Structure probing data (2A3 and DMS) for a 177-nucleotide construct. For 2A3 the reverse transcriptase was SuperScript II with manganese. The reactions ran in a buffer of 150 mM KOAc, 10 mM MgCl2 and 150 mM bicine (pH 8.5), at 24 C.
RNA sequence: GGGAACGACUCGAGUAGAGUCGAAAAGGCUUGAGCACGCGGCUGAGCUUGCCCUUCUGCGUCAGCGUGGGCGUCUUGAUGGCGUUCGUACGGCAGUAGUCGUAGAUGAAGCCCUUGGGCUGCGGGACGCAGAAUGGAGGUUCGCCUCCAUUCUGCGAAAAGAAACAACAACAACAAC
Reactivity to 2A3 in 0.01 (KOAc 150mM, MgCl2 10mM, bicine 150mM(pH8.5), 24C), signal-to-noise 3, nucleotides 027 to 126: g020g000c010u070u080g120a010g050c040a020c140g100c030g110g000c040u040g000a010g000c000u010u120g040c000c010c000u010u040c030u010g030c020g030u010c000a060g050c040g010u080g000g090g010c010g040u020c040u100u180g110a150u260g030g000c010g030u000u020c020g060u060a070c030g060g030c030a020g040u130a070g010u060c010g000u020a020g000a120u070g060a030a040g010c000c030c000u060u170g070g020g010c010u020g010c000g010g030g020a020
Reactivity to DMS in 0.01 (KOAc 150mM, MgCl2 10mM, bicine 150mM(pH8.5), 24C), signal-to-noise 3, nucleotides 027 to 126: g000g000c010u010u000g010a280g030c060a110c080g000c080g000g000c010u010g010a110g000c010u000u010g020c030c010c020u000u000c010u000g000c000g010u000c020a120g020c030g050u000g000g010g010c000g010u000c010u000u000g000a120u000g010g000c000g010u010u000c010g000u010a000c000g010g000c010a220g020u000a060g020u000c010g020u000a020g000a080u010g010a120a250g010c010c010c030u000u000g010g010g020c030u000g000c050g010g000g010a150